[RMDB]
RNA sequence: GGGAACGACUCGAGUAGAGUCGAAAAUUCUUCGACUCGGACCGGCUCAUCUCGACAAGAGGCGGCGGACCUCAGUGCUCUUACUCUUUUCUGUAAAGAGGAGACUGCUGGUCCCGCCGCCCGAGUUCGAGCAUGAGCCAAUUCCGAGCGAAGGGGGGAAAAUAUACCUGUUCGCAGGUAUAUUUUCAAAAGAAACAACAACAACAAC
Reactivity to 2A3 in 0.01 (KOAc 150mM, MgCl2 10mM, bicine 150mM(pH8.5), 24C), signal-to-noise 1, nucleotides 027 to 156: u050u010c010u000u000c000g170a220c000u000c000g000g000a000c020c050g000g000c000u000c010a010u000c010u000c000g010a000c020a030a070g100a160g050g000c010g000g000c000g000g000a020c010c000u000c030a040g020u090g300c030u040c040u150u290a280c010u080c020u050u100u170u050c210u230g170u300a000a010a010g000a010g000g010a000g020a000c000u000g080c070u010g000g000u030c010c000c100g000c010c000g000c000c000c000g000a000g000u090u050c000g010a000g000c000a010u000g010a010g010c000c000a000a000u010u000c000c000g000a000g010c020g010a000a000g000g010g000g050g000
This 207-nucleotide RNA was probed chemically with 2A3. The reactions ran in a buffer of 150 mM KOAc, 10 mM MgCl2 and 150 mM bicine (pH 8.5), at 24 C.